[RMDB]
RNA sequence: GGGAACGACUCGAGUAGAGUCGAAAAGCAAUCAUCAGGGGAUGCCUGUAAACCCAAAAUGAUUGUCAUAUAGAACAGGAUCGUCGCCUAGUACGUUGUGGACGAAGCGACUAAAACUUACGCAACUCGCCCAAUGCACCCUGCCCGUCGGGUCGCUCGUUUUCUAACUGUUCGCAGUUAGAAAACGAAAAGAAACAACAACAACAAC
Reactivity to 2A3 in 0.01 (KOAc 150mM, MgCl2 10mM, bicine 150mM(pH8.5), 24C), signal-to-noise 1, nucleotides 027 to 156: g030c000a020a010u030c000a000u000c040a030g000g030g010g000a020u070g020c000c030u040g010u070a160a110a140c000c000c030a030a000a000a000u010g000a010u010u020g050u060c040a000u130a020u030a150g080a090a030c030a040g050g000a050u040c060g010u010c010g000c000c050u000a000g000u000a010c070g030u030u030g000u030g030g020a020c000g010a010a000g010c000g000a000c000u010a000a000a000a050c120u090u140a030c040g050c010a010a040c030u020c080g040c000c060c000a020a030u060g000c010a040c020c000c000u020g000c040c020c020g060u050c030g000g020g020u010c020g050c030u030